[RMDB]
Chemical mapping of a 177-nucleotide RNA with DMS. The reactions ran in a buffer of 150 mM KOAc, 10 mM MgCl2 and 150 mM bicine (pH 8.5), at 24 C. Values are in units of 0.01, from 0 to 300, in steps of 10. The DMS profile rests on 817 reads.

RNA sequence: GGGAACGACUCGAGUAGAGUCGAAAAUGCAUUAAACCCGCAAGGUUUGGUGUUCAUGAUGAAAGGUCAGGUUGGUUCGUACCCAUUAGACGGUCGGCAGACUUGUACUGAACUGAGUAAUUGUGUACCUCGUAGGAUACUUCGGUAUCCUACGAGGAAAAGAAACAACAACAACAAC
Reactivity to DMS in 0.01 (KOAc 150mM, MgCl2 10mM, bicine 150mM(pH8.5), 24C), signal-to-noise 2, nucleotides 027 to 126: u010g000c000a020u000u010a020a010a000c000c000c060g020c300a160a300g000g010u000u000u000g000g000u000g000u000u000c050a000u000g020a000u000g010a140a160a200g000g010u010c000a010g000g000u000u000g010g020u000u010c300g010u000a150c300c000c000a040u010u000a300g010a030c030g010g000u000c030g000g070c300a070g000a000c020u000u000g020u010a070c010u000g010a030a070c040u010g010a040g000u000a040a010u000u000g030u000g000u000a260